[RMDB]
RNA sequence: GGGAACGACUCGAGUAGAGUCGAAAAAGAGGCGAUACGUCGCCUCAAGCUUGGUGCUUAGCGUCUUUCACCAAGCAUAUUACACGCGGAUAACCGCCAAAGGAGAAACACUGACUACGGUCAGUGAGGAAGUUGGUUCGGUUCGCCGAACCAACAAGCUAAGGUAUCUCUUCGGAGAUACCUUAGCAAAAGAAACAACAACAACAAC
Reactivity to DMS in 0.01 (KOAc 150mM, MgCl2 10mM, bicine 150mM(pH8.5), 24C), signal-to-noise 1, nucleotides 027 to 156: a070g030a000g030g000c000g000a080u010a050c300g040u010c000g020c010c000u000c050a020a000g000c000u020u010g000g050u010g010c040u010u000a010g010c130g070u000c050u000u000u020c010a000c000c000a000a050g050c030a060u000a020u000u000a040c210a130c160g020c040g000g000a160u010a040a160c020c000g040c010c060a010a120a090g000g040a090g020a280a080a140c010a000c010u000g000a000c020u020a100c300g070g000u000c000a020g000u020g010a050g030g000a080a110g010u000u000g020g040u020u000c000g010g060u020u020c300g050c020c010g000a000a000c000c010a000a000c000a000a120
Reactivity to 2A3 in 0.01 (KOAc 150mM, MgCl2 10mM, bicine 150mM(pH8.5), 24C), signal-to-noise 3, nucleotides 027 to 156: a000g010a010g000g000c010g010a020u020a030c170g090u030c000g000c010c000u000c010a000a010g000c010u020u050g000g000u040g020c060u050u080a050g070c020g180u040c020u010u030u010c000a000c000c000a010a000g000c000a010u030a020u080u150a080c080a010c020g040c010g020g030a100u130a300a210c020c010g010c030c020a070a150a070g090g020a100g070a030a090a000c020a010c000u010g010a000c000u030a030c140g040g000u020c000a020g000u000g000a040g010g060a120a040g010u000u000g010g010u010u000c000g000g050u000u040c130g030c090c000g000a010a010c000c000a000a010c000a000a000
The record gives the reactivity of an RNA of 207 nucleotides to DMS and 2A3.
In probing experiments dimethyl sulfate is read out at A N1 and C N3, which are open when not base-paired.
Reactivities are given for positions 27 through 156.
The RNA was probed in 150 mM KOAc, 10 mM MgCl2 and 150 mM bicine (pH 8.5) at 24 C.
For DMS the reverse transcriptase was MarathonRT.